[RMDB]
RNA sequence: GGGAACGACUCGAGUAGAGUCGAAAAUGUGGGUGCUACAGGUCCCCAGUGUGACACUCAGUAGCCUUGCUGAAGGCCGAGGGUGCCCCUUAGGUGGGUUGUGGGCAGCCUCUGCUGGAGAGGGAGCGUACCUUACGUGUUUCGACACGUAAGGUACAAAAGAAACAACAACAACAAC
Reactivity to DMS in 0.01 (KOAc 150mM, MgCl2 10mM, bicine 150mM(pH8.5), 24C), signal-to-noise 3, nucleotides 027 to 126: u010g000u000g010g010g030u000g010c010u000a030c020a060g010g010u010c020c000c020c030a230g010u000g010u010g010a030c020a020c030u000c030a070g010u010a090g000c010c030u000u010g030c080u000g010a210a180g000g000c010c080g000a060g010g010g000u000g010c010c010c000c030u000u000a120g010g020u010g030g000g010u000u000g000u000g020g010g010c010a050g000c020c010u000c010u000g010c010u000g000g000a140g000a060g010g010g000a130g010c180
Reactivity to 2A3 in 0.01 (KOAc 150mM, MgCl2 10mM, bicine 150mM(pH8.5), 24C), signal-to-noise 2, nucleotides 027 to 126: u220g010u060g010g020g000u020g010c020u070a040c000a040g080g030u050c010c000c010c000a080g090u060g020u030g090a020c010a000c060u010c000a030g040u060a060g110c010c020u030u130g040c060u080g060a040a020g020g000c020c010g010a000g000g000g060u010g010c000c010c000c000u030u060a090g010g080u110g100g090g020u050u100g050u240g000g000g000c000a030g090c010c010u000c000u010g000c010u020g010g020a080g000a020g040g020g020a030g050c050
Chemical mapping of a 177-nucleotide RNA with DMS and 2A3. As a SHAPE reagent, 2A3 marks flexible, mostly unpaired nucleotides at the ribose 2'-OH. The DMS profile rests on 3,790 reads. The RNA was probed in 150 mM KOAc, 10 mM MgCl2 and 150 mM bicine (pH 8.5) at 24 C. 2A3 adducts were read by reverse transcription with SuperScript II with manganese.